An RNA of 207 nucleotides, treated with 2A3 and DMS and read out base by base. The reactions ran in a buffer of 150 mM KOAc, 10 mM MgCl2 and 150 mM bicine (pH 8.5), at 24 C. The 2A3 profile rests on 3,706 reads. For DMS the reverse transcriptase was MarathonRT. High 2A3 reactivity points to a flexible backbone, as in loops and unpaired stretches.
[RMDB]
RNA sequence: GGGAACGACUCGAGUAGAGUCGAAAAAUACAAGGGGAGGUUUCGGCCAAUUGUUGUAUGCAGAAAGCGUGAGGAAGGUAGCACUUAGACACUCACGAGUAGCGGUUCGGCAGUAGUGCUAAAAUGAGACAGUACGAAAAGUUCGCUUUUCGUACAACAUUCAGCUAGAGUUCGCUCUAGCUGAAUGAAAAGAAACAACAACAACAAC
Reactivity to 2A3 in 0.01 (KOAc 150mM, MgCl2 10mM, bicine 150mM(pH8.5), 24C), signal-to-noise 4, nucleotides 027 to 156: a000u150a020c050a050a030g020g010g000g000a020g010g040u050u060u110c100g030g020c010c040a050a050u060u030g030u010u010g040u040a100u080g000c030a020g120a120a080a010g060c020g030u040g010a030g020g010a060a030g020g020u030a000g020c000a010c050u040u040a040g010a030c020a010c070u020c010a020c020g020a040g020u080a020g010c020g020g040u040u050c020g030g010c030a020g050u100a010g010u030g000c020u060a040a030a030a070u080g000a030g020a020c070a070g000u010a000c000g000a000a000a010a000g020u040u080c150g040c120u010u000u000u000c000g000u000a000c000a000a010
Reactivity to DMS in 0.01 (KOAc 150mM, MgCl2 10mM, bicine 150mM(pH8.5), 24C), signal-to-noise 3, nucleotides 027 to 156: a110u000a090c030a060a090g010g030g020g020a080g030g010u000u000u000c070g030g040c020c060a070a130u010u000g010u000u010g000u000a120u000g010c040a130g000a060a070a110g010c030g000u000g000a040g010g000a070a070g020g040u000a090g000c110a080c050u000u000a170g000a130c040a090c030u000c020a060c040g000a100g010u000a090g000c050g010g000u010u000c040g010g050c030a100g000u000a060g020u000g020c030u000a040a030a070a060u010g010a150g020a110c070a100g000u000a010c010g000a020a020a030a020g020u000u000c300g020c000u000u000u000u000c000g030u010a000c000a040a060